Structure probing data (2A3 and DMS) for a 207-nucleotide construct. DMS (dimethyl sulfate) methylates the pairing face of unpaired adenines and cytosines. The RNA was probed in 150 mM KOAc, 10 mM MgCl2 and 150 mM bicine (pH 8.5) at 24 C. The 2A3 profile rests on 659 reads. DMS adducts were read by reverse transcription with MarathonRT. For DMS, 2,667 sequencing reads were counted.
RNA sequence: GGGAACGACUCGAGUAGAGUCGAAAACUUCUGUGUCUCUCACACUAGGAGCUGUAGACUGGAACUUUUCCUAUUCAGCCAUCUUGAAUAAUGCCCAAAAGCCCCUCAUUUUUAUGACUGAAAUAAUCUAGGACUCUAGCAGCAUAUCUAUGAGUUGAAAUGCACUACUGUUCGCAGUAGUGCAUUUAAAAGAAACAACAACAACAAC
Reactivity to 2A3 in 0.01 (KOAc 150mM, MgCl2 10mM, bicine 150mM(pH8.5), 24C), signal-to-noise 1, nucleotides 027 to 156: c000u030u020c010u110g030u000g030u070c000u000c000u030c110a040c040a050c050u150a050g020g030a050g070c060u040g090u100a090g070a130c130u110g000g060a030a070c000u000u000u190u080c010c010u040a100u000u080c000a000g040c050c010a140u030c030u060u040g040a060a000u020a040a020u180g030c050c000c000a050a190a130a020g040c120c020c040c000u000c030a020u000u020u020u010u040a080u070g010a070c010u000g030a050a130a060u150a060a090u120c020u000a010g040g080a180c080u040c000u300a000g010c000a000g000c000a000u020a020u060c000u010a000u020g000a000g020u020u030g020
Reactivity to DMS in 0.01 (KOAc 150mM, MgCl2 10mM, bicine 150mM(pH8.5), 24C), signal-to-noise 2, nucleotides 027 to 156: c040u000u000c010u000g020u000g000u000c040u000c120u020c030a150c070a070c030u000a080g020g000a060g030c050u000g050u000a180g030a080c060u020g030g010a050a090c110u000u000u000u000c070c040u010a180u000u000c000a080g020c000c040a050u010c050u010u000g010a060a090u000a050a090u000g000c010c000c010a040a070a150a200g000c010c000c010c040u010c010a050u000u000u000u010u000a030u010g000a190c020u000g000a090a060a110u000a070a090u000c010u000a020g000g000a030c030u000c010u000a120g020c020a090g010c060a000u010a050u000c070u000a040u010g000a090g000u000u000g010